[RMDB]
RNA sequence: GGGAACGACUCGAGUAGAGUCGAAAAUGGUCUGCCCUUGACAAGUGGUGUUGAAGGUUGGGUCUUGCGCAAUGGGAACCUGUGAACCAUGUCAGGUCCGGAAGGAAGCAGCAUUAAGCAGUGCUUCUCAUGUGCCGCGAGGUCGCCUGGCCCGAGCGGGUAUGUCUUAGUUCGCUAAGACAUACCCAAAAGAAACAACAACAACAAC
Reactivity to DMS in 0.01 (KOAc 150mM, MgCl2 10mM, bicine 150mM(pH8.5), 24C), signal-to-noise 3, nucleotides 027 to 156: u000g000g020u000c060u000g010c010c010c040u000u000g020a160c080a110a170g000u000g040g010u000g050u000u000g020a080a050g020g020u000u000g050g020g010u000c010u000u000g010c010g000c030a100a050u000g010g020g030a040a020c020c000u000g000u000g000a110a220c240c230a050u000g000u010c020a300g000g000u000c000c000g050g060a150a200g000g020a040a050g010c040a250g020c020a070u000u010a160a300g000c020a060g020u000g000c120u000u010c000u000c000a000u000g040u000g000c090c040g040c000g000a050g000g020u000c110g000c020c010u000g000g020c010c010c010g020a200g020c230
Reactivity to 2A3 in 0.01 (KOAc 150mM, MgCl2 10mM, bicine 150mM(pH8.5), 24C), signal-to-noise 2, nucleotides 027 to 156: u160g050g040u000c000u020g050c010c000c000u050u080g040a050c070a120a080g030u020g020g050u040g030u090u030g090a070a030g030g000u020u000g060g000g020u190c000u010u010g000c010g000c000a010a020u010g000g010g000a000a020c000c000u010g000u030g010a020a020c100c000a040u000g060u120c010a010g000g030u000c000c010g030g100a090a100g020g000a020a010g000c010a000g000c000a000u020u030a050a000g010c000a010g010u020g110c200u030u000c010u000c000a030u100g160u100g220c140c020g000c010g010a000g020g020u100c120g010c010c000u000g000g010c000c000c000g030a040g060c130